[RMDB]
RNA sequence: GGGAACGACUCGAGUAGAGUCGAAAACCAGAAUACUGGAUCGAAGGAUAGGCGACUUCGAAACGCUUGGAAGGCUAUGAGUUGACAAGCCAAGCGUUUAGCCUUCGCGUGCUGAAAUAGGCAGCAGGUAUGUAGAUUGAUUCGUCAAUCUACAUACAAAAGAAACAACAACAACAAC
Reactivity to 2A3 in 0.01 (KOAc 150mM, MgCl2 10mM, bicine 150mM(pH8.5), 24C), signal-to-noise 9, nucleotides 027 to 126: c000c000a010g130a100a190u300a140c090u100g040g050a070u040c010g020a020a000g050g030a080u100a120g110g000c040g040a070c030u030u020c040g010a060a030a010c010g000c000u020u010g020g040a220a100g120g000c020u040a100u280g060a070g150u080u080g060a060c020a020a010g010c000c000a000a000g000c000g000u000u010u030a000g010c000c000u010u060c040g010c030g060u060g000c000u010g020a040a120a120u090a060g070g000c000a000g000c010a010g040
Reactivity to DMS in 0.01 (KOAc 150mM, MgCl2 10mM, bicine 150mM(pH8.5), 24C), signal-to-noise 9, nucleotides 027 to 126: c000c000a130g010a150a090u030a090c110u010g000g010a130u010c010g000a020a010g000g000a080u020a050g000g010c030g000a090c020u000u010c090g000a040a070a040c050g000c000u000u000g000g010a080a080g000g000c080u010a080u030g010a120g020u010u010g010a150c070a050a070g000c000c020a010a010g000c000g000u000u010u000a050g010c010c010u000u010c050g010c060g010u020g010c020u000g000a060a080a090u020a080g010g000c010a050g000c020a090g010

Chemical mapping of a 177-nucleotide RNA with 2A3 and DMS. It was measured as part of the RMDB library OK1LIB. For 2A3 the reverse transcriptase was SuperScript II with manganese. For 2A3, 25,042 sequencing reads were counted. DMS adducts were read by reverse transcription with MarathonRT.